[RMDB]
Conditions: 150 mM KOAc, 10 mM MgCl2 and 150 mM bicine (pH 8.5), 24 C.
Chemical mapping of a 177-nucleotide RNA with 2A3 and DMS.
For DMS the reverse transcriptase was MarathonRT.
RNA sequence: GGGAACGACUCGAGUAGAGUCGAAAAUAUCCAAGACCAACAAGAAAGUAAUUUCCCACCUCACCCUACCACCACCCAGAAAAGGAGCACAGAGAUGGGGAAGAGAGUGGCUGCAUCUGGCAUCCAGGUGUAAUAAUACUUUCGAGUAUUAUUACACAAAAGAAACAACAACAACAAC
Reactivity to 2A3 in 0.01 (KOAc 150mM, MgCl2 10mM, bicine 150mM(pH8.5), 24C), signal-to-noise 9, nucleotides 027 to 126: u150a020u010c020c010a030a010g080a070c030c020a020a100c030a090a040g110a170a090a010g080u150a070a170u030u030u020c010c000c000a020c000c010u020c010a050c010c010c010u040a040c010c020a020c010c010a030c010c010c010a010g100a020a060a010a020g060g010a060g020c070a030c020a090g050a000g020a050u060g010g000g040g010a050a030g030a000g010a010g030u040g020g000c020u030g000c000a060u060c050u060g060g000c010a040u030c020c010a030g040
Reactivity to DMS in 0.01 (KOAc 150mM, MgCl2 10mM, bicine 150mM(pH8.5), 24C), signal-to-noise 9, nucleotides 027 to 126: u030a070u010c030c030a090a090g000a110c060c040a050a070c120a090a090g000a090a080a070g010u020a080a110u010u000u000c010c000c000a090c070c020u000c020a130c070c020c020u000a080c060c040a050c060c070a110c030c020c020a100g000a070a060a080a060g000g010a070g020c100a050c140a060g000a050g010a060u010g010g000g010g010a040a030g000a070g000a070g010u010g000g000c050u000g000c040a070u010c060u010g000g010c060a070u010c030c040a070g010